RNA sequence: GGGAACGACUCGAGUAGAGUCGAAAACAUUGGUCCGACGGACAGAAAUCAUGUAUAAGGCUUACAGUUCGGAUAAGACUGCUGAACAAGUUGAAGUCCAAUAGCUAACAGAGGACUGGUAGUAGACUCAAUGGCAUCUUUUCGAAGAUGCCAUUGAAAAAGAAACAACAACAACAAC
Reactivity to DMS in 0.01 (KOAc 150mM, MgCl2 10mM, bicine 150mM(pH8.5), 24C), signal-to-noise 6, nucleotides 027 to 126: c080a110u020u010g020g000u000c010c030g030a300c080g000g020a050c090a050g010a070a130a140u020c130a090u030g000u030a050u010a140a110g010g000c000u000u010a090c110a060g020u010u000c050g000g010a040u020a110a180g020a080c070u000g000c070u010g000a050a080c110a070a060g000u030u020g000a070a100g010u000c010c020a060a080u010a050g000c060u010a090a180c080a020g000a300g000g000a070c000u000g020g020u000a090g000u010a090g000a130c130
Reactivity to 2A3 in 0.01 (KOAc 150mM, MgCl2 10mM, bicine 150mM(pH8.5), 24C), signal-to-noise 4, nucleotides 027 to 126: c050a080u030u100g020g000u000c010c020g050a010c030g030g050a030c030a070g110a010a110a050u190c060a100u080g090u080a080u090a220a030g030g010c000u010u020a060c020a110g010u040u070c000g020g010a020u040a060a010g060a100c060u050g040c080u060g040a040a020c040a100a060g020u050u090g140a060a020g020u000c000c000a030a060u040a060g020c020u030a050a000c010a090g030a010g000g000a010c020u030g000g010u010a040g020u010a020g020a040c050
The data come from the RNA Mapping Database (RMDB), libraries RFM100 and RFMREP. Chemical mapping of a 177-nucleotide RNA with DMS and 2A3. 2A3 adducts were read by reverse transcription with SuperScript II with manganese. Conditions: 150 mM KOAc, 10 mM MgCl2 and 150 mM bicine (pH 8.5), 24 C.